The record gives the reactivity of an RNA of 207 nucleotides to DMS and 2A3.
It was measured as part of the RMDB library RNAMAK.
For DMS, 2,479 sequencing reads were counted.
Values cover nucleotides 27 to 156.
For DMS the reverse transcriptase was MarathonRT.
[RMDB]
RNA sequence: GGGAACGACUCGAGUAGAGUCGAAAAGUUCUUUCUUCGGAAAGAACAAAAAGCGUACUACUCUGCAUGGCUGCCGUUUGACGGAGUCCCAAAUAGGACUCCCGAGGAACUACAGUCAGUAUGGAGUAUCGCAAAAAUCGCGGAUUCGUCCGCGAAAGGGUAUUUAAUUCUUCGGAAUUAAAUACCCAAAAGAAACAACAACAACAAC
Reactivity to DMS in 0.01 (KOAc 150mM, MgCl2 10mM, bicine 150mM(pH8.5), 24C), signal-to-noise 1, nucleotides 027 to 156: g010u000u000c010u010u000u000c010u000u000c300g040g000a000a060a010g000a020a000c010a050a060a100a090a090g050c030g010u000a120c080u010a020c010u000c030u000g070c240a120u000g030g000c000u000g000c020c040g020u000u000u000g010a300c190g020g000a020g000u030c000c020c010a040a190a240u040a050g020g000a010c000u000c000c010c000g000a300g020g000a010a060c010u010a020c020a040g020u000c030a020g020u000a100u010g000g010a020g000u000a040u000c040g040c030a050a070a040a100a080u000c000g020c000g010g010a140u000u010c290g020u010c010c000g010c010g010a010a020a100
Reactivity to 2A3 in 0.01 (KOAc 150mM, MgCl2 10mM, bicine 150mM(pH8.5), 24C), signal-to-noise 2, nucleotides 027 to 156: g000u000u000c000u030u010u000c000u040u040c110g050g020a000a000a010g020a000a010c010a000a100a020a010a000g060c050g030u070a070c040u000a010c000u050c010u030g040c080a200u000g010g000c000u000g020c000c040g000u020u000u120g010a010c000g000g000a000g000u000c000c000c010a220a300a080u290a090g000g000a000c020u000c000c000c000g030a040g060g140a000a000c000u020a010c010a000g010u000c010a000g020u040a070u170g020g000a010g000u010a010u160c010g000c010a010a040a150a000a000u040c010g000c010g000g000a000u050u070c180g020u010c030c010g000c010g020a020a010a000